[RMDB]
RNA sequence: GGGAACGACUCGAGUAGAGUCGAAAAGUCAUGAAACACGGAAUCGUGCGCAUUCUAGUCUGUGGGAUGCGCGCUAAAUUAAAGCAGAAUCGCCAUGUCGUCAUCCUGUCUGUCGGAGGGCGGUGCGGUUAAAGCCAAAAGACAAACUACGCAUGUACCUACUUAUCCAGUUCGCUGGAUAAGUAGGAAAAGAAACAACAACAACAAC
Reactivity to DMS in 0.01 (KOAc 150mM, MgCl2 10mM, bicine 150mM(pH8.5), 24C), signal-to-noise 2, nucleotides 027 to 156: g010u000c060a150u000g010a130a110a120c040a070c070g050g000a110a070u000c140g000u010g010c040g020c010a030u000u000c010u040a120g010u000c130u000g000u000g010g000g030a040u000g000c040g010c030g000c020u010a030a060a100u000u000a060a130a130g030c000a150g020a030a020u000c070g020c020c050a070u000g020u000c050g050u000c000a010u000c020c000u000g030u000c110u020g000u000c040g000g000a120g020g040g000c030g000g000u010g020c000g000g030u010u000a050a100a130g010c140c040a060a080a070a110g000a050c030a040a060a070c020u010a070c040g050c040a090u000g010u010a210
Reactivity to 2A3 in 0.01 (KOAc 150mM, MgCl2 10mM, bicine 150mM(pH8.5), 24C), signal-to-noise 7, nucleotides 027 to 156: g070u060c040a060u170g110a050a060a040c110a030c100g080g090a050a080u100c070g020u010g000c000g000c000a000u000u000c010u020a040g040u000c020u030g020u060g000g000g010a000u010g000c000g000c000g000c000u000a000a010a020u240u180a100a040a010g020c010a000g010a020a020u030c020g000c020c010a020u070g020u020c000g010u000c010a010u010c000c020u040g010u040c020u010g000u020c000g000g000a010g000g000g000c010g010g000u020g010c030g000g000u020u030a030a010a010g150c100c050a020a010a000a010g030a010c020a010a030a010c050u150a040c110g060c090a060u100g020u060a040